[RMDB]
RNA sequence: GGGAACGACUCGAGUAGAGUCGAAAACAUCAGGCUUUACUAUGUGGAGAAGAAGUAUUGGCCCGUCACUCAAUGACACAGCCCCGUUCGGCUGCGUAAUCAACACCUCCCCAGUUAGGGCCACAGACGACUAUUUUAGUUUCGACUAAAAUAGUCGAAAAGAAACAACAACAACAAC
Reactivity to 2A3 in 0.01 (KOAc 150mM, MgCl2 10mM, bicine 150mM(pH8.5), 24C), signal-to-noise 6, nucleotides 027 to 126: c020a070u110c060a060g030g020c010u060u050u020a030c030u060a060u270g080u120g070g030a060g020a110a050g060a070a040g070u100a140u110u110g000g000c010c020c000g040u060c020a040c020u080c040a050a150u120g010a030c010a000c010a030g010c010c020c000c050g150u170u140c040g010g010c010u010g000c000g050u070a040a090u100c070a050a080c020a060c070c000u020c020c000c000c000a010g010u030u070a010g010g000g000c020c000a010c000a010g090a010
Reactivity to DMS in 0.01 (KOAc 150mM, MgCl2 10mM, bicine 150mM(pH8.5), 24C), signal-to-noise 7, nucleotides 027 to 126: c150a090u010c120a130g010g010c030u000u000u010a040c040u000a070u010g040u000g010g000a080g000a080a070g010a080a090g000u010a120u010u010g010g000c000c020c030g020u000c160a060c070u000c130a060a080u000g000a060c080a040c040a020g010c000c010c120c300g010u000u010c140g000g010c000u000g010c030g020u010a050a060u000c100a040a070c150a140c040c030u000c000c000c010c030a080g010u000u000a110g000g000g000c020c020a040c210a070g010a160